Chemical mapping of a 177-nucleotide RNA with DMS and 2A3. The reactions ran in a buffer of 150 mM KOAc, 10 mM MgCl2 and 150 mM bicine (pH 8.5), at 24 C. Values cover nucleotides 27 to 126.
[RMDB]
RNA sequence: GGGAACGACUCGAGUAGAGUCGAAAAGACUGGGAUGAAAACAUGUCACACCAAACUCCCAGUAUCCGUUGUCUGUCUAUUGUAUGUGGACCCGAGGGUGUGGCAGCACCUGUCAUCCUACCUUCACCAGAUAUAGUGACUUCGGUCACUAUAUCUGAAAAGAAACAACAACAACAAC
Reactivity to DMS in 0.01 (KOAc 150mM, MgCl2 10mM, bicine 150mM(pH8.5), 24C), signal-to-noise 5, nucleotides 027 to 126: g000a060c140u000g000g000g000a040u000g000a070a080a090a090c160a080u010g030u000c010a020c020a030c020c020a080a120a210c120u000c020c010c020a060g000u000a040u000c050c030g020u010u000g000u000c080u000g000u010c050u000a080u000u010g010u020a050u010g020u000g010g010a070c030c130c080g000a100g010g010g010u010g010u000g010g020c030a040g010c100a050c110c100u010g010u000c010a030u000c010c010u000a080c120c060u000u010c110a100c160
Reactivity to 2A3 in 0.01 (KOAc 150mM, MgCl2 10mM, bicine 150mM(pH8.5), 24C), signal-to-noise 2, nucleotides 027 to 126: g050a010c050u040g010g000g010a060u030g080a020a130a060a010c060a120u070g000u060c010a020c000a000c030c000a060a130a150c030u010c000c000c000a010g030u030a110u030c040c090g090u100u190g060u040c080u040g060u000c010u080a200u200u300g170u070a140u210g050u080g010g040a040c000c080c020g020a070g190g000g000u000g000u000g010g000c000a010g000c010a030c030c020u060g020u070c030a000u030c000c000u040a130c020c010u080u090c020a050c110
The 2A3 profile rests on 1,860 reads. It was measured as part of the RMDB library OK2TRN. The DMS profile rests on 6,211 reads. For 2A3 the reverse transcriptase was SuperScript II with manganese.